Record summary: The record gives the reactivity of an RNA of 177 nucleotides to 2A3 and DMS. Source: RMDB libraries RFM100 and RFMREP, as collected in RNAgym. Conditions: 150 mM KOAc, 10 mM MgCl2 and 150 mM bicine (pH 8.5), 24 C. For 2A3 the reverse transcriptase was SuperScript II with manganese.
RNA sequence: GGGAACGACUCGAGUAGAGUCGAAAAAGCUAAUAUCUUAGCGCACUAAUGCUAAGAAAGUUAGACUGCAAAGAAUAUAUUUUCGCCAACACCAGGGGACUUUUGUCCACCAACACCAGGUUUUACCGAAUCGAAUCGGAUUCGUCCGAUUCGAUUCAAAAGAAACAACAACAACAAC
Reactivity to 2A3 in 0.01 (KOAc 150mM, MgCl2 10mM, bicine 150mM(pH8.5), 24C), signal-to-noise 5, nucleotides 027 to 126: a000g020c000u000a000a000u030a040u040c010u010u000a000g000c000g020c040a060c140u180a140a020u300g000c020u010a000a000g000a020a000a000g000u000u000a030g020a260c030u020g000c120a060a090a050g070a240a020u170a010u030a140u120u100u070u120c040g030c000c020a050a040c000a070c040c030a050g050g000g000g000a020c020u130u140u170u250g010u000c010c030a030c030c000a140a000c020a010c020c030a010g080g090u020u050u080u110a080c050c020
Reactivity to DMS in 0.01 (KOAc 150mM, MgCl2 10mM, bicine 150mM(pH8.5), 24C), signal-to-noise 1, nucleotides 027 to 126: a110g010c010u000a000a000u010a020u000c010u000u000a000g000c000g000c300a070c200u050a050a040u040g000c050u080a000a000g050a000a300a070g010u020u020a020g000a040c000u000g000c000a170a000a070g040a070a070u000a020u000a000u020u000u000u000c020g050c100c060a150a080c060a050c070c010a000g020g020g010g010a020c050u000u000u010u000g000u000c000c000a150c090c010a080a070c150a080c140c080a040g000g000u000u000u060u000a160c140c050